[RMDB]
Conditions: 150 mM KOAc, 10 mM MgCl2 and 150 mM bicine (pH 8.5), 24 C. Chemical mapping of a 177-nucleotide RNA with 2A3 and DMS. DMS adducts were read by reverse transcription with MarathonRT. It was measured as part of the RMDB library M2PK90. The DMS profile rests on 633 reads.
RNA sequence: GGGAACGACUCGAGUAGAGUCGAAAAAGAAAUCCACGCAAGCGAAGAUAAAAGCGGAACGGUAACCGCAAUACCGUACGGUCAUGGCACGCGAAAGCGAAAGACCGAAACAUGCCAUACAAAAAAACAUGUGAUUUCUGUUCGCAGAAAUCACAUGAAAAGAAACAACAACAACAAC
Reactivity to 2A3 in 0.01 (KOAc 150mM, MgCl2 10mM, bicine 150mM(pH8.5), 24C), signal-to-noise 2, nucleotides 027 to 126: a000g060a020a030a030u040c040c010a070c050g010c030a020a050g030c020g150a100a020g020a100u160a120a180a030a020g110c040g010g010a010a010c000g050g000u010a130a060c030c020g050c080a120a020u010a000c000c010g050u060a010c000g000g000u030c010a060u030g010g000c000a000c030g040c000g050a110a010a000g000c010g100a170a150a050g040a010c020c020g050a010a010a010c010a000u040g000c000c000a010u100a050c120a070a160a000a000a020a000a020
Reactivity to DMS in 0.01 (KOAc 150mM, MgCl2 10mM, bicine 150mM(pH8.5), 24C), signal-to-noise 1, nucleotides 027 to 126: a090g030a060a010a090u000c000c040a130c040g000c110a100a030g000c090g010a130a070g000a050u000a020a090a180a110g000c020g020g000a060a140c010g000g010u000a090a020c000c070g010c170a020a140u000a210c030c000g060u010a280c020g010g020u000c020a020u000g000g010c030a190c060g010c000g020a070a060a110g030c020g020a070a040a090g010a090c000c000g020a030a020a050c040a000u020g000c000c020a000u000a040c190a010a000a000a070a000a050a130